RNA sequence: GGGAACGACUCGAGUAGAGUCGAAAAACAGCACAAUAUAUGAUCGCGUAUGCGAGAGUAGUGCCAACAUAUUGUGCUAAUGAGUGCCUCUCGUUCUAUGUCUUAUAUUACCGCAAACACAAAAAGAGUGGUGACUCGUAUUCGUACGAGUCACCACAAAAGAAACAACAACAACAAC
Reactivity to DMS in 0.01 (KOAc 150mM, MgCl2 10mM, bicine 150mM(pH8.5), 24C), signal-to-noise 1, nucleotides 027 to 126: a070c190a090g000c030a010c000a000a030u030a010u000a050u000g000a200u000c070g030c000g000u040a090u030g020c000g010a110g000a270g030u000a000g030u030g010c070c030a080a090c120a090u000a000u000u000g000u000g030c020u010a080a040u020g030a090g020u000g000c010c000u000c010u000c030g000u000u000c020u000a080u000g000u000c020u000u010a030u010a110u000u000a120c030c030g000c260a050a080a030c230a050c150a000a070a090a110a110g010a190
Reactivity to 2A3 in 0.01 (KOAc 150mM, MgCl2 10mM, bicine 150mM(pH8.5), 24C), signal-to-noise 1, nucleotides 027 to 126: a000c040a000g080c000a000c010a000a000u010a000u010a030u080g130a080u120c030g000c000g180u300a080u300g000c010g000a030g020a000g000u060a000g060u040g160c070c010a020a030c000a030u000a000u010u020g000u000g070c060u010a050a060u200g070a070g060u030g000c030c030u050c010u010c000g010u030u000c010u030a080u060g080u060c010u040u020a150u020a050u210u050a060c000c010g000c070a020a080a040c060a040c050a060a120a030a030a060g130a000
Conditions: 150 mM KOAc, 10 mM MgCl2 and 150 mM bicine (pH 8.5), 24 C.
Chemical mapping of a 177-nucleotide RNA with DMS and 2A3.
The DMS profile rests on 591 reads.
For DMS the reverse transcriptase was MarathonRT.
Reactivities are given for positions 27 through 126.